[RMDB]
RNA sequence: GGGAACGACUCGAGUAGAGUCGAAAAAGACAGCCAAAAAAAUUAGCCGGGUGUGGUGGCACACAGCUGUAGUUCCAGCUACUCAAGAGGCUGAGCCGGGAGAAUUGCUUGAGGCUGGGAGUUCAAGCCUGCGGUGAGCUAUAAUUGUGCCACUGCAGAUCGUACGUUAUUUCGAUAACGUACGAUCAAAAGAAACAACAACAACAAC
Reactivity to 2A3 in 0.01 (KOAc 150mM, MgCl2 10mM, bicine 150mM(pH8.5), 24C), signal-to-noise 1, nucleotides 027 to 156: a040g040a050c050a010g000c020c010a010a160a000a060a090a000a090u160u120a080g030c040c010g060g030g000u040g000u020g000g000u010g010g000c010a000c000a000c010a050g040c010u050g010u050a040g080u010u050c000c000a000g000c030u140a230c000u040c020a040a010g010a040g000g000c020u030g020a010g040c000c000g000g030g030a190g040a110a170u130u130g020c010u000u010g020a020g020g030c010u020g020g000g000a030g000u040u110c090a070a000g040c000c010u010g030c010g020g080u090g030a030g000c040u110a140u070a270a190u170u110g000u010g050c000c000a010c000u000g000c020a000
Source: RMDB library OK3TST, as collected in RNAgym. An RNA of 207 nucleotides, treated with 2A3 and read out base by base. For 2A3 the reverse transcriptase was SuperScript II with manganese. The reactions ran in a buffer of 150 mM KOAc, 10 mM MgCl2 and 150 mM bicine (pH 8.5), at 24 C.